[RMDB]
Source: RMDB libraries RFM100 and RFMREP, as collected in RNAgym.
An RNA of 177 nucleotides, treated with 2A3 and read out base by base.
The reactions ran in a buffer of 150 mM KOAc, 10 mM MgCl2 and 150 mM bicine (pH 8.5), at 24 C.

RNA sequence: GGGAACGACUCGAGUAGAGUCGAAAAACAGAUCUCAGAGCGAGAUACAGUGACCAGGAGUUCACUCUGCCUUGAGCUUCCGUCAGGUGAGCUCGGUGAGAUGGCCUGGUUGCUGAAGACGCCAUAUGAUCAGGUUACGGUUCGCCGUAACCUGAUCAAAAGAAACAACAACAACAAC
Reactivity to 2A3 in 0.01 (KOAc 150mM, MgCl2 10mM, bicine 150mM(pH8.5), 24C), signal-to-noise 4, nucleotides 027 to 126: a000c040a040g120a130u020c020u010c020a060g010a010g060c040g020a030g000a050u080a130c010a000g000u000g020a000c000c000a000g010g000a010g030u300u300c010a000c000u000c000u010g000c020c000u110u300g000a000g000c000u020u020c010c050g120u160c100a060g000g070u180g050a000g010c000u000c000g010g000u140g000a010g000a000u000g000g000c000c010u000g010g000u000u010g000c000u000g000a010a000g050a010c010g050c010c010a030u080a130u150